[RMDB]
Background
The record gives the reactivity of an RNA of 177 nucleotides to 2A3 and DMS. The reactions ran in a buffer of 150 mM KOAc, 10 mM MgCl2 and 150 mM bicine (pH 8.5), at 24 C. For DMS, 6,882 sequencing reads were counted.
RNA sequence: GGGAACGACUCGAGUAGAGUCGAAAAGAUAUGGACAAGCGAAGAACGUCCGGUCCGUUGAAAUCGGAAACGAUGGAGGACGACGGGAGCUUGUCCUAAGUCAAAUCCCCAUCUUCGGAUGGGGAAAGUAUUCACCUUAGUUCGCUAAGGUGAAUACAAAAGAAACAACAACAACAAC
Reactivity to 2A3 in 0.01 (KOAc 150mM, MgCl2 10mM, bicine 150mM(pH8.5), 24C), signal-to-noise 5, nucleotides 027 to 126: g020a010u060a040u150g010g000a010c010a010a000g010c010g260a280a030g060a200a070c020g020u040c120c030g130g110u000c000c010g120u220u060g030a050a040a020u010c020g010g040a080a020a020c020g010a020u040g020g020a020g000g000a000c000g000a010c020g020g010g000a040g000c000u000u010g000u000c000c000u000a050a000g020u020c030a000a020a190u010c000c000c000c010a000u000c010u060u070c300g160g000a000u000g000g000g010g000a000a000a030
Reactivity to DMS in 0.01 (KOAc 150mM, MgCl2 10mM, bicine 150mM(pH8.5), 24C), signal-to-noise 6, nucleotides 027 to 126: g000a020u000a300u000g000g000a000c000a020a010g010c000g010a140a200g020a150a170c020g010u010c030c220g050g020u000c010c010g010u010u000g010a160a100a010u000c010g000g000a130a070a170c010g000a020u000g000g000a080g000g000a030c010g020a020c010g000g000g000a150g010c010u000u000g000u000c000c000u000a010a070g000u000c040a080a100a150u010c000c000c000c000a000u000c000u000u010c200g020g010a010u000g000g000g000g000a000a000a030